[RMDB]
RNA sequence: GGGAACGACUCGAGUAGAGUCGAAAAGAUAUGGACGCGUAGGACGCGAGGGCUUCGGAAACGAAGCCUCCCCACCGAACUACGUCUGAUGCGUCCUAAGUCAAACUAGCAUGUUCGCAUGCUAGAACGUACUGAGUUCGUUCGCGAACUCAGUACGAAAAGAAACAACAACAACAAC
Reactivity to DMS in 0.01 (KOAc 150mM, MgCl2 10mM, bicine 150mM(pH8.5), 24C), signal-to-noise 2, nucleotides 027 to 126: g020a070u000a280u010g030g000a000c000g010c000g010u000a300g010g050a050c020g000c060g050a070g010g010g020c010u000u000c010g020g000a050a130a210c000g010a000a010g000c000c000u000c020c010c070c060a300c240c080g010a060a070c080u000a150c030g000u000c060u000g010a100u000g020c000g040u000c000c000u010a010a050g040u020c050a110a050a210c010u010a000g010c000a020u000g000u000u030c200g000c010a000u000g000c010u000a010g000a090a150
Reactivity to 2A3 in 0.01 (KOAc 150mM, MgCl2 10mM, bicine 150mM(pH8.5), 24C), signal-to-noise 2, nucleotides 027 to 126: g000a030u050a020u110g030g020a000c010g030c040g030u020a070g060g010a020c050g010c040g240a040g020g040g000c020u000u010c000g000g030a020a070a000c000g000a000a010g000c000c000u040c000c010c000c000a090c020c120g040a130a020c100u160a090c130g000u050c080u090g060a060u210g020c000g000u010c000c000u000a030a000g020u010c020a030a000a140c010u000a000g010c020a030u020g040u050u070c300g060c190a000u020g020c030u030a010g010a040a030
Record summary: The data come from the RNA Mapping Database (RMDB), library TTRDEL. An RNA of 177 nucleotides, treated with DMS and 2A3 and read out base by base. The reactions ran in a buffer of 150 mM KOAc, 10 mM MgCl2 and 150 mM bicine (pH 8.5), at 24 C. Reactivities are given for positions 27 through 126. For 2A3 the reverse transcriptase was SuperScript II with manganese. The 2A3 profile rests on 3,020 reads.